Notes: The record gives the reactivity of an RNA of 177 nucleotides to DMS and 2A3. The reactions ran in a buffer of 150 mM KOAc, 10 mM MgCl2 and 150 mM bicine (pH 8.5), at 24 C.
[RMDB]
RNA sequence: GGGAACGACUCGAGUAGAGUCGAAAAGGUAAUACGUAGGGUGCGAGCGUUGUCCGGAAUUACUGGGCGUAAAGAGCUUGUAGGCGGCUUGUCGCGUCGAUCGUGAAAACUUGGGGCUCAACCCCAAGCCAGUUGGGGAAUUCGUUCCCCAACUGGCAAAAGAAACAACAACAACAAC
Reactivity to DMS in 0.01 (KOAc 150mM, MgCl2 10mM, bicine 150mM(pH8.5), 24C), signal-to-noise 2, nucleotides 027 to 126: g000g020u050a030a100u030a020c070g030u000a060g020g000g020u020g020c030g040a080g010c080g000u040u000g020u020c000c010g000g040a210a060u050u050a090c030u000g000g000g040c000g040u070a030a140a110g010a070g000c010u000u000g020u010a110g010g050c070g010g020c020u020u020g000u000c040g010c040g000u010c030g000a100u020c100g000u000g010a090a050a060a170c080u030u000g000g000g000g000c120u120c270a120a220c010c000c000c000a020a000
Reactivity to 2A3 in 0.01 (KOAc 150mM, MgCl2 10mM, bicine 150mM(pH8.5), 24C), signal-to-noise 3, nucleotides 027 to 126: g110g050u080a080a020u130a110c050g020u040a060g030g040g030u010g020c030g030a030g040c060g030u060u060g040u070c030c010g020g050a060a000u060u090a110c040u060g030g000g000c030g000u020a050a090a100g080a000g040c030u060u060g040u050a060g120g080c030g010g000c000u060u080g050u010c010g020c020g060u040c040g020a100u050c030g010u050g110a040a030a000a120c020u000u010g010g000g000g000c010u030c100a110a160c000c000c000c000a000a000

For DMS the reverse transcriptase was MarathonRT.